The record gives the reactivity of an RNA of 177 nucleotides to DMS and 2A3.

RNA sequence: GGGAACGACUCGAGUAGAGUCGAAAAGGAACCGUCUCGAUCCAAGGCACGCCAAACCUCUGGAACCCACCCGAGAGGCAUUUCUCGUCAAUCUAUAUCGCACUGUGCAAGCCAGCAGUCGCCUUCCCCAUAAAUGGCUUUUCGAAGCCAUUUAUGGAAAAGAAACAACAACAACAAC
Reactivity to DMS in 0.01 (KOAc 150mM, MgCl2 10mM, bicine 150mM(pH8.5), 24C), signal-to-noise 6, nucleotides 027 to 126: g010g010a080a110c040c030g020u020c020u000c030g010a090u020c040c050a080a140g000g000c060a060c050g010c020c050a070a090a120c030c020u010c050u010g000g010a090a090c040c030c030a090c090c040c020g010a050g010a080g000g030c080a070u000u010u020c040u000c040g010u020c060a090a070u040c080u020a060u020a060u010c060g000c020a110c090u000g000u010g010c090a060a090g030c030c040a060g010c120a060g000u010c020g020c040c040u010u000c020c020
Reactivity to 2A3 in 0.01 (KOAc 150mM, MgCl2 10mM, bicine 150mM(pH8.5), 24C), signal-to-noise 9, nucleotides 027 to 126: g070g010a040a020c020c010g060u010c020u020c040g080a080u020c020c020a040a040g040g000c040a020c070g040c010c030a070a070a070c010c000u030c030u020g030g040a090a090c010c010c000a030c000c020c000g070a040g000a010g040g010c020a040u050u100u030c040u010c020g100u030c030a050a090u020c040u100a100u030a050u220c040g030c040a040c050u040g030u080g060c030a040a030g030c000c010a020g010c020a010g020u020c010g040c010c010u030u040c010c010

The RNA was probed in 150 mM KOAc, 10 mM MgCl2 and 150 mM bicine (pH 8.5) at 24 C. DMS adducts were read by reverse transcription with MarathonRT. 2A3 adducts were read by reverse transcription with SuperScript II with manganese.